[RMDB]
RNA sequence: GGGAACGACUCGAGUAGAGUCGAAAAGAUAUGGAUUCGUGGAGCUUUUGACGGUUAGCCAUCGGAAACGAUGGGCUAACCGAUAAGCUCCGAAUCCUAAGUCAAAACUUGACGUUCGCGUCAAGAAUCAUAGUCCAUGGUUCGCCAUGGACUAUGAAAAAGAAACAACAACAACAAC
Reactivity to DMS in 0.01 (KOAc 150mM, MgCl2 10mM, bicine 150mM(pH8.5), 24C), signal-to-noise 4, nucleotides 027 to 126: g010a020u000a300u010g000g010a000u000u000c010g000u010g040g010a010g040c000u000u000u000u010g010a240c130g010g000u000u000a010g010c010c000a030u010c010g000g000a090a060a160c010g020a000u000g020g020g000c020u000a010a000c000c000g000a010u000a010a020g010c000u010c000c000g000a000a000u000c000c000u000a030a120g010u010c040a140a080a150a220c000u000u000g010a020c000g020u010u010c300g030c020g010u000c010a010a010g000a210a160
Reactivity to 2A3 in 0.01 (KOAc 150mM, MgCl2 10mM, bicine 150mM(pH8.5), 24C), signal-to-noise 4, nucleotides 027 to 126: g010a000u060a030u090g010g010a000u030u030c090g100u300g160g070a020g000c040u150u190u250u300g300a300c100g000g000u010u000a010g010c000c000a010u020c010g000g000a040a020a030c010g010a000u030g020g030g030c000u000a010a010c000c000g010a000u000a000a000g000c000u000c000c000g000a000a010u000c010c000u000a090a010g000u010c020a020a010a150a270c010u000u030g010a010c030g070u010u070c300g040c030g150u020c010a010a000g000a040a090
Structure probing data (DMS and 2A3) for a 177-nucleotide construct. 2A3 adducts were read by reverse transcription with SuperScript II with manganese. Source: RMDB library TTRDES, as collected in RNAgym.